[RMDB]
RNA sequence: GGGAACGACUCGAGUAGAGUCGAAAAGGGUUACCCUUCGGGGUAACCCAUACCUCCUGGCGGUGCGGCGCCGGCCGCGCCGGGAAGGCCGCCUUUACCUCCUAAAGGAAUCAUUCGUGAUUCCUAAUUAUAGCUAUCAUUUCGAUGAUAGCUAUAAAAAAGAAACAACAACAACAAC
Reactivity to DMS in 0.01 (KOAc 150mM, MgCl2 10mM, bicine 150mM(pH8.5), 24C), signal-to-noise 4, nucleotides 027 to 126: g010g010g010u000u000a010c000c010c010u000u020c170g030g000g000g020u000a010a010c000c000c000a010u000a030c150c050u000c040c040u000g010g020c010g010g030u000g020c020g020g010c010g020c080c110g010g010c250c130g010c040g000c010c010g000g000g010a100a130g000g000c040c030g010c010c030u000u000u010a180c080c050u000c020c030u010a050a120a060g000g010a010a010u000c010a040u000u000c190g000u000g000a010u000u000c000c000u000a010a040
Reactivity to 2A3 in 0.01 (KOAc 150mM, MgCl2 10mM, bicine 150mM(pH8.5), 24C), signal-to-noise 2, nucleotides 027 to 126: g010g000g000u060u050a000c030c000c010u040u050c210g030g030g010g000u000a010a000c000c000c000a000u010a010c000c000u030c010c010u020g000g030c000g030g060u090g080c010g000g020c010g000c050c080g070g030c110c030g010c000g010c000c000g010g000g000a030a030g190g000c000c010g010c000c000u020u140u090a130c010c010u030c010c040u170a260a120a000g000g000a010a000u020c010a020u040u090c140g080u030g010a000u000u020c000c000u010a010a000
Source: RMDB library M2PK50, as collected in RNAgym. Chemical mapping of a 177-nucleotide RNA with DMS and 2A3. The 2A3 profile rests on 2,702 reads. For 2A3 the reverse transcriptase was SuperScript II with manganese. The reactions ran in a buffer of 150 mM KOAc, 10 mM MgCl2 and 150 mM bicine (pH 8.5), at 24 C.